[RMDB]
RNA sequence: GGGAACGACUCGAGUAGAGUCGAAAAUGUCCAUUGGAAAUGCCGACGUUUCUUUCUAAUUGGGCGAGGGUUAGUUGCUUUGACUGAGCUAAUUGUUUAAUGCGAGAAAUUAAGGUCAUUUCAAGUCAUUAUUUCUAGGGUUCGCCCUAGAAAUAAUAAAAGAAACAACAACAACAAC
Reactivity to DMS in 0.01 (KOAc 150mM, MgCl2 10mM, bicine 150mM(pH8.5), 24C), signal-to-noise 5, nucleotides 027 to 126: u020g000u020c010c010a170u020u010g020g000a020a030a030u000g010c030c020g010a130c300g000u010u010u020c000u000u000u010c080u030a190a030u010u010g000g010g000c010g000a100g010g000g010u010u000a030g020u000u010g010c150u010u010u030g010a040c060u010g010a070g000c020u010a050a100u000u000g010u000u000u010a030a060u010g010c260g010a040g000a040a030a010u000u030a150a210g000g020u030c040a050u000u000u000c010a080a090g010u020c150
Reactivity to 2A3 in 0.01 (KOAc 150mM, MgCl2 10mM, bicine 150mM(pH8.5), 24C), signal-to-noise 7, nucleotides 027 to 126: u160g020u000c000c000a020u010u150g100g010a010a020a020u030g010c020c020g030a040c080g020u000u030u020c010u030u030u000c050u070a070a050u060u050g040g010g000c030g020a050g030g060g040u040u040a060g010u050u110g100c140u120u130u260g050a050c040u030g010a010g060c010u050a140a120u030u020g040u070u090u050a050a030u070g010c020g020a010g010a050a040a020u080u100a090a030g030g000u140c020a000u010u010u000c000a000a010g050u020c020
An RNA of 177 nucleotides, treated with DMS and 2A3 and read out base by base. The RNA was probed in 150 mM KOAc, 10 mM MgCl2 and 150 mM bicine (pH 8.5) at 24 C. For DMS the reverse transcriptase was MarathonRT. Values cover nucleotides 27 to 126.